[RMDB]
Description: Chemical mapping of a 207-nucleotide RNA with 2A3. The RNA was probed in 150 mM KOAc, 10 mM MgCl2 and 150 mM bicine (pH 8.5) at 24 C. For 2A3, 460 sequencing reads were counted. Source: RMDB library OK3TST, as collected in RNAgym.

RNA sequence: GGGAACGACUCGAGUAGAGUCGAAAACUUCGAACGUCCUCAGGGUUUCUCCUGGGGCAACCCCGAAGGCGCUCAUAACUUCGCUGGCCGACUUGAUGGAGCCGAGCAGGCGCUGUCGAAGUUCGGUGGGACGGCAACUGCGGCGACGGACGGCCUCACAGUCCUAGUACUUCGGUACUAGGACUGUAAAAGAAACAACAACAACAAC
Reactivity to 2A3 in 0.01 (KOAc 150mM, MgCl2 10mM, bicine 150mM(pH8.5), 24C), signal-to-noise 1, nucleotides 027 to 156: c000u020u020c010g060a060a030c080g070u110c020c030u000c020a030g090g080g080u130u300u090c170u050c010c020u020g040g010g070g000c040a000a010c010c010c000c000g030a000a000g040g020c020g000c010u050c080a220u080a300a070c020u140u160c060g000c080u050g030g000c000c000g030a150c010u040u120g050a100u110g050g020a030g000c000c030g050a030g100c060a010g060g000c060g040c090u000g000u010c010g070a200a060g010u140u300c120g010g030u120g110g100g100a030c000g000g000c020a100a050c020u030g010c000g010g010c010g040a030c030g010g010a010c010g000g000c000c000u000c000